The data come from the RNA Mapping Database (RMDB), library M2PK50. The record gives the reactivity of an RNA of 177 nucleotides to DMS and 2A3. The 2A3 profile rests on 2,886 reads. DMS adducts were read by reverse transcription with MarathonRT. Conditions: 150 mM KOAc, 10 mM MgCl2 and 150 mM bicine (pH 8.5), 24 C. The DMS profile rests on 2,706 reads.
RNA sequence: GGGAACGACUCGAGUAGAGUCGAAAAGCCAUCGCUUUCGAGCGAUGGCAUUGCCCAAACAGGACCUGGGGGUGUCUGGGCUGCUAAACUCAUCAGCCGUUCUACCGCUAAAUUUCGAUUUAGCGAAGGAUUAAAGACGUUUCGACGUCUUUAAUCCAAAAGAAACAACAACAACAAC
Reactivity to DMS in 0.01 (KOAc 150mM, MgCl2 10mM, bicine 150mM(pH8.5), 24C), signal-to-noise 3, nucleotides 027 to 126: g000c000c000a010u000c000g020c010u000u010u000c170g020a040g020c010g000a010u000g020g020c000a000u010u000g010c000c000c000a050a080a130c140a090g000g010a050c040c030u010g010g010g010g000g040u000g000u010c050u010g000g010g010c020u010g010c120u010a070a070a050c070u010c080a090u000c060a010g000c010c010g000u000u000c020u000a170c150c030g010c000u000a000a010a010u000u000u020c170g010a060u000u000u000a010g020c000g020a080a110
Reactivity to 2A3 in 0.01 (KOAc 150mM, MgCl2 10mM, bicine 150mM(pH8.5), 24C), signal-to-noise 2, nucleotides 027 to 126: g030c000c000a000u000c010g030c010u090u060u100c270g110a020g000c000g010a000u000g000g010c000a000u000u120g010c010c000c000a020a060a010c070a060g070g000a040c000c020u070g020g010g010g000g030u020g010u010c030u040g010g030g000c010u020g000c020u080a060a080a020c030u020c030a070u010c010a030g040c010c010g000u020u020c040u150a250c020c030g000c000u010a000a010a000u070u090u070c240g040a030u000u020u000a000g000c010g000a060a060